Source: RMDB library RNAMAK, as collected in RNAgym. An RNA of 207 nucleotides, treated with 2A3 and DMS and read out base by base. Reactivities are given for positions 27 through 156. 2A3 adducts were read by reverse transcription with SuperScript II with manganese.
[RMDB]
RNA sequence: GGGAACGACUCGAGUAGAGUCGAAAACGCUGGGUAAUAGCGAACUACAGGGAGCUGAAGCGCGCACGGCAUCGAUCUGUAAUCUUCGCAAUAUUACCUGUGCUGAAGCGCGCACGGCAACCGAAAGGUGCGAAAUGGGUCGGUUCGCCGACCCAAACAGAGGAAAUGGUUUCGACCAUUUCCUCUGAAAAGAAACAACAACAACAAC
Reactivity to 2A3 in 0.01 (KOAc 150mM, MgCl2 10mM, bicine 150mM(pH8.5), 24C), signal-to-noise 3, nucleotides 027 to 156: c060g010c010u100g000g020g040u100a070a050u040a090g180c000g020a050a000c030u030a000c050a050g010g020g010a040g040c010u050g040a180a040g000c010g000c010g000c030a030c000g000g000c000a050u300c100g060a050u070c020u030g020u020a020a050u050c110u220u080c050g020c120a080a100u030a010u040u010a000c000c010u030g040u060g010c020u080g030a110a030g010c000g020c010g000c000a000c050g060g000c030a030a050c000c000g030a070a080a040g080g000u030g020c010g040a010a090a110u070g000g000g010u000c010g020g030u040u020c200g020c050c000g000a000c000c000c020a000a000a000
Reactivity to DMS in 0.01 (KOAc 150mM, MgCl2 10mM, bicine 150mM(pH8.5), 24C), signal-to-noise 1, nucleotides 027 to 156: c110g050c010u000g000g020g040u000a080a090u000a120g010c000g020a040a000c010u000a040c010a050g010g000g000a150g050c020u010g000a040a000g030c080g030c020g040c050a300c040g040g100c000a260u000c100g010a030u000c000u010g020u010a040a050u010c120u010u010c000g060c170a080a090u000a020u000u010a020c000c000u000g000u000g040c020u000g020a100a050g010c070g100c010g000c030a170c010g000g010c050a120a200c020c010g050a030a140a160g010g000u000g020c060g010a030a130a090u000g010g010g010u000c010g030g000u000u000c210g020c020c000g040a000c000c010c000a020a000a070